[RMDB]
RNA sequence: GGGAACGACUCGAGUAGAGUCGAAAACGGGUGUUUGUCUGAAUGCUCUAUUGCUAGUGAAACAGCAUUUCAUGGCGCAUCGACUACGUGCCUGGCUCGGCUACGAUCAGCCGGGUUGCAUGUGCCAAGUGUGUGGACGUUUCGACGUUCACGCGCUAAAAGAAACAACAACAACAAC
Reactivity to DMS in 0.01 (KOAc 150mM, MgCl2 10mM, bicine 150mM(pH8.5), 24C), signal-to-noise 9, nucleotides 027 to 126: c100g000g000g010u000g010u000u020u020g020u020c060u010g010a050a030u010g010c060u000c050u010a140u010u010g000c070u010a070g010u020g010a120a090a140c300a020g000c020a080u000u020u020c080a090u020g010g000c010g010c010a010u000c020g000a080c050u010a070c070g010u020g010c050c270u020g000g000c050u000c020g010g000c070u020a110c230g010a100u020c110a030g020c010c000g000g000g000u000u010g000c090a010u010g010u000g000c020c030a060
Reactivity to 2A3 in 0.01 (KOAc 150mM, MgCl2 10mM, bicine 150mM(pH8.5), 24C), signal-to-noise 9, nucleotides 027 to 126: c030g030g010g000u030g010u030u180u180g050u040c030u030g020a040a010u010g010c010u000c040u070a120u080u170g100c100u100a090g080u080g260a090a060a030c030a030g000c010a010u050u110u140c060a080u120g000g000c000g000c000a010u010c010g050a050c020u100a050c030g030u040g010c010c040u050g020g000c010u000c010g020g000c020u070a070c100g200a210u150c070a000g000c000c000g000g000g000u010u040g010c010a020u040g020u040g030c010c010a050

The record gives the reactivity of an RNA of 177 nucleotides to DMS and 2A3. The RNA was probed in 150 mM KOAc, 10 mM MgCl2 and 150 mM bicine (pH 8.5) at 24 C. For DMS, 77,817 sequencing reads were counted. The 2A3 profile rests on 93,301 reads. The data come from the RNA Mapping Database (RMDB), library OK1LIB.